[RMDB]
RNA sequence: GGGAACGACUCGAGUAGAGUCGAAAAGUGGACUGAGCGAGGCGAAGGCGAUGUUCUUGUAGGCAUUCGGUGAUCAAGGACGAAGGCUGGAGUAUCGAAAGUGAUUAGAUACCGCAGUAGUUCCAGCGCUAGAGCCCAAUUUCGAUUGGGCUCUAGCAAAAGAAACAACAACAACAAC
Reactivity to DMS in 0.01 (KOAc 150mM, MgCl2 10mM, bicine 150mM(pH8.5), 24C), signal-to-noise 2, nucleotides 027 to 126: g000u010g000g000a030c010u000g000a120g080c050g000a020g000g000c040g000a170a030g010g000c000g040a110u040g000u040u030c020u000u000g010u050a100g000g060c080a120u040u000c110g020g040u010g000a130u010c010a060a090g000g030a010c000g010a120a090g000g040c020u000g000g000a150g000u000a040u000c000g010a100a170a010g000u110g040a170u020u010a210g000a000u000a070c000c030g000c040a070g000u000a130g000u000u000c000c060a050g010c300
Reactivity to 2A3 in 0.01 (KOAc 150mM, MgCl2 10mM, bicine 150mM(pH8.5), 24C), signal-to-noise 2, nucleotides 027 to 126: g110u060g020g040a080c050u000g030a000g040c020g020a040g090g000c110g010a090a040g010g000c080g050a040u040g080u050u040c000u040u050g140u100a050g120g000c040a110u000u120c060g140g080u100g010a100u020c030a070a060g050g010a040c050g030a080a000g090g010c020u000g010g050a030g020u010a010u000c000g020a000a060a020g180u140g060a030u030u080a050g000a040u040a000c030c030g070c060a030g040u020a030g010u020u000c000c050a010g030c090
An RNA of 177 nucleotides, treated with DMS and 2A3 and read out base by base. The reactions ran in a buffer of 150 mM KOAc, 10 mM MgCl2 and 150 mM bicine (pH 8.5), at 24 C. For DMS the reverse transcriptase was MarathonRT.